RNA sequence: GGGAACGACUCGAGUAGAGUCGAAAAACUAUUGACUAUCGUCAUGAAACACAAGACCAAAGUGGUAAUAAUCACAAAGACCGAUUAUUAAUGUCUCACCGCUUUGCUAAUGGCUUCGGUUUAUCACGUCCGUCGAUCAAUUCGUUGAUCGACGGACAAAAGAAACAACAACAACAAC
Reactivity to DMS in 0.01 (KOAc 150mM, MgCl2 10mM, bicine 150mM(pH8.5), 24C), signal-to-noise 1, nucleotides 027 to 126: a090c070u000a020u000u000g000a050c050u000a090u000c220g050u020c020a080u000g000a130a070a020c090a030c080a000a080g000a160c300c020a010a070a050g000u000g000g000u000a060a040u000a000a040u000c000a090c200a060a130a110g000a040c300c110g000a020u000u000a000u000u010a020a160u050g000u030c060u000c070a130c000c010g000c000u040u000u000g010c050u000a050a090u000g000g050c020u000u000c040g000g000u000u000u010a050u020c220a050c130
Reactivity to 2A3 in 0.01 (KOAc 150mM, MgCl2 10mM, bicine 150mM(pH8.5), 24C), signal-to-noise 1, nucleotides 027 to 126: a000c110u090a100u100u130g060a050c010u110a020u190c080g000u000c000a010u050g020a030a070a010c200a010c010a000a030g100a020c000c070a000a010a010g010u010g030g060u000a000a000u020a020a000u040c010a010c080a180a260a010g130a150c100c040g000a000u000u010a010u020u060a100a140u110g030u000c020u040c060a040c020c000g020c020u000u010u030g020c030u090a190a000u080g020g010c010u050u040c060g040g010u000u080u160a160u170c040a020c100
Structure probing data (DMS and 2A3) for a 177-nucleotide construct. 2A3 adducts were read by reverse transcription with SuperScript II with manganese. The data come from the RNA Mapping Database (RMDB), library OK2TRN. Reactivities are given for positions 27 through 126.